[RMDB]
RNA sequence: GGGAACGACUCGAGUAGAGUCGAAAAGACAUUUAUAAAGACGGUCUGGUAGUGUGGGUACAGUGUUGAGGGCAGAUUGAGUUUUGGGCACAGAAGAAGUUGUCUGUUAAAAUAUUGCUAUCACAAUUCAUGUACAAUUCAGGUGUGAAAUGAGGGAAUAAUAUGACCUCUUCGGAGGUCAUAUUAUAAAAGAAACAACAACAACAAC
Reactivity to 2A3 in 0.01 (KOAc 150mM, MgCl2 10mM, bicine 150mM(pH8.5), 24C), signal-to-noise 3, nucleotides 027 to 156: g060a010c020a010u140u180u170a250u230a130a120a030g070a020c050g030g000u010c020u030g010g020u070a070g010u030g030u030g040g020g010u080a030c030a050g080u070g060u130u060g030a070g000g020g000c010a010g020a050u070u060g030a040g140u050u070u090u070g000g010g000c030a010c000a060g060a050a010g030a030a010g030u030u050g020u020c090u040g030u080u080a050a040a100a070u140a080u090u070g040c020u060a040u160c020a010c010a060a050u140u090c050a100u080g050u050a030c040a070a000u090u100c020a020g050g000u010g020u020g060a020a070a060u110g020a010g020g030g020a040
Reactivity to DMS in 0.01 (KOAc 150mM, MgCl2 10mM, bicine 150mM(pH8.5), 24C), signal-to-noise 2, nucleotides 027 to 156: g020a090c050a080u000u010u000a160u020a160a070a090g000a110c030g030g000u000c020u020g000g020u010a060g040u010g020u010g000g000g000u000a010c020a100g030u010g030u000u010g010a130g000g010g020c040a040g010a060u010u000g010a120g000u000u000u010u010g020g000g020c050a040c040a050g010a060a100g010a070a170g010u000u000g010u000c060u000g010u020u000a050a050a040a110u000a060u000u000g000c030u000a090u010c050a060c030a030a130u000u010c030a060u000g040u000a080c090a060a170u000u000c030a070g010g020u000g030u010g000a020a030a070u000g010a070g020g030g000a100
The record gives the reactivity of an RNA of 207 nucleotides to 2A3 and DMS. For 2A3, 1,217 sequencing reads were counted. The data come from the RNA Mapping Database (RMDB), library OK3TST. DMS adducts were read by reverse transcription with MarathonRT.